[RMDB]
RNA sequence: GGGAACGACUCGAGUAGAGUCGAAAAAGUGAAGGUUACCGAUGCUAACGGUAAUACGCUUGCCGGGCAGACGGUCAGCGUGAUGGCAGGCAACGGCGCAACGGUCGCCCCGACGGUCACCACGCAGAACACACGAACGUUUCGACGUUCGUGUGUUAAAAGAAACAACAACAACAAC
Reactivity to DMS in 0.01 (KOAc 150mM, MgCl2 10mM, bicine 150mM(pH8.5), 24C), signal-to-noise 2, nucleotides 027 to 126: a140g070u010g010a110a090g030g020u010u000a140c000c000g030a300u010g010c080u020a110a150c040g010g040u000a020a020u000a120c230g020c180u000u000g000c030c030g000g030g000c060a020g000a170c070g030g000u000c240a090g000c080g000u010g000a000u000g010g030c000a040g020g020c110a230a090c120g020g000c040g020c040a110a000c280g030g010u040c020g020c040c070c200c050g010a160c000g070g000u000c000a010c020c000a010c020g000c020a090g000
Reactivity to 2A3 in 0.01 (KOAc 150mM, MgCl2 10mM, bicine 150mM(pH8.5), 24C), signal-to-noise 1, nucleotides 027 to 126: a000g200u160g080a160a040g150g010u090u030a030c010c010g000a040u040g010c050u070a160a120c020g020g010u000a030a020u190a090c020g060c110u020u010g000c000c010g000g010g000c000a020g160a300c000g010g000u020c040a010g020c020g000u000g000a070u040g010g090c020a040g090g070c050a000a000c060g040g000c000g000c040a170a160c210g190g000u100c020g060c030c020c000c040g040a120c000g050g010u000c010a010c020c000a000c010g000c010a010g040